RNA sequence: GGGAACGACUCGAGUAGAGUCGAAAAGCACCUGGCCGGCCAACAGCAUCUUGGCCAGCUGGUCACCGAUGGCCUGCUGCACCAGCCGGCGCAACGGCCGCGCCCCGUACACCGGGUCGAAUCCGCGGUUCUUCACCCUCUUCGGAGGGUGAAGAACAAAAGAAACAACAACAACAAC
Reactivity to 2A3 in 0.01 (KOAc 150mM, MgCl2 10mM, bicine 150mM(pH8.5), 24C), signal-to-noise 1, nucleotides 027 to 126: g030c030a000c010c000u000g050g010c000c000g030g000c000c000a040a000c000a100g090c000a070u090c130u010u070g060g000c000c010a020g000c020u040g010g010u020c010a020c080c100g160a090u080g040g010c000c000u030g090c020u000g000c010a070c060c000a060g060c090c000g020g000c000g030c020a030a140c050g000g020c000c030g000c000g030c000c000c000c000g060u050a090c010a010c110c000g010g000g000u040c030g020a060a070u030c010c020g140c000g020
Reactivity to DMS in 0.01 (KOAc 150mM, MgCl2 10mM, bicine 150mM(pH8.5), 24C), signal-to-noise 1, nucleotides 027 to 126: g020c130a040c040c000u040g010g180c020c000g020g070c040c140a120a280c120a020g000c060a160u090c150u160u000g000g000c210c000a060g000c040u050g000g050u040c080a260c070c050g090a100u000g030g000c010c000u010g050c120u000g000c220a110c090c300a170g000c000c040g000g000c010g020c060a060a170c030g020g020c000c100g000c030g000c130c000c020c040g000u040a050c160a050c080c020g060g000g030u000c000g050a160a100u000c040c000g000c140g000